[RMDB]
RNA sequence: GGGAACGACUCGAGUAGAGUCGAAAACCAAUGGGAAACCAUUGGCAACUCGGAAACGAGUUGAACCGGUAAUUAGCCAAAAAUCCGGCGACAAUGCGAUUUUAAGCAUUGUCGAUUACGCCCAUGUCGAUUUUAAGACAUGGAGCGAAUUUGGCAAGGUACGUUGUCCGUUCGCGGACGAUGUACCAAAAGAAACAACAACAACAAC
Reactivity to 2A3 in 0.01 (KOAc 150mM, MgCl2 10mM, bicine 150mM(pH8.5), 24C), signal-to-noise 2, nucleotides 027 to 156: c000c000a000a000u000g000g000g020a030a010a040c000c000a010u000u000g000g000c000a000a000c000u000c000g020g020a060a040a020c000g000a000g010u000u010g000a060a030c000c000g010g000u030a060a080u070u080a030g000c000c000a020a000a000a000a000u000c000c000g000g000c000g000a000c000a000a000u000g000c010g140a160u020u060u060u300a070a020g000c000a000u000u000g000u000c000g000a000u000u010a070c020g010c000c000c000a000u000g000u000c020g060a120u040u050u080u300a190a110g000a000c000a000u010g000g000a150g000c000g000a000a030u210u130u040g000g000c000a000a070